Overview: Structure probing data (2A3 and DMS) for a 207-nucleotide construct.

RNA sequence: GGGAACGACUCGAGUAGAGUCGAAAAUUUUCGGUCCUUCGUGCUGACGAAGCUCCAGAGGGACGACUUUGAGUCUAGGCAGGUGGACGCCGCGGUGAACGCUUUCCGAGGCCAGCUCAUUCUUUCCAACCACGACCUCAUUCAAUACAUCUACCUGCGUAGUCUCUAAAUUCGUUUAGAGACUACGAAAAGAAACAACAACAACAAC
Reactivity to 2A3 in 0.01 (KOAc 150mM, MgCl2 10mM, bicine 150mM(pH8.5), 24C), signal-to-noise 5, nucleotides 027 to 156: u100u080u030u090c060g080g010u020c010c000u010u020c020g020u020g020c010u030g010a120c150g060a060a000g000c010u040c050c100a050g010a010g000g000g000a010c010g010a010c020u090u070u100g050a030g030u020c050u090a090g020g020c030a010g020g050u040g050g030a030c040g020c060c020g000c050g040g020u100g070a160a050c040g020c030u080u080u030c020c030g030a050g000g060c010c020a020g000c030u010c030a050u090u040c010u040u050u010c030c020a060a070c040c020a060c070g070a100c020c010u050c020a060u170u080c070a090a090u100a150c030a070u100c010u170a060c020c010u060g020
Reactivity to DMS in 0.01 (KOAc 150mM, MgCl2 10mM, bicine 150mM(pH8.5), 24C), signal-to-noise 3, nucleotides 027 to 156: u000u000u000u000c020g040g020u010c010c010u000u000c010g020u000g010c100u000g030a300c030g010a080a140g000c020u000c010c000a100g010a060g010g000g010a070c040g010a030c050u010u000u000g010a140g000u000c050u000a050g020g060c050a090g020g010u000g010g010a130c070g000c050c020g020c030g020g000u000g010a100a090c090g000c080u020u000u000c020c060g010a080g040g030c020c020a070g000c030u020c040a080u010u000c070u000u010u000c030c020a090a100c040c050a080c070g010a070c020c000u010c010a110u010u000c050a050a120u000a080c050a050u000c030u000a050c040c020u010g000
It was measured as part of the RMDB library OK3TST.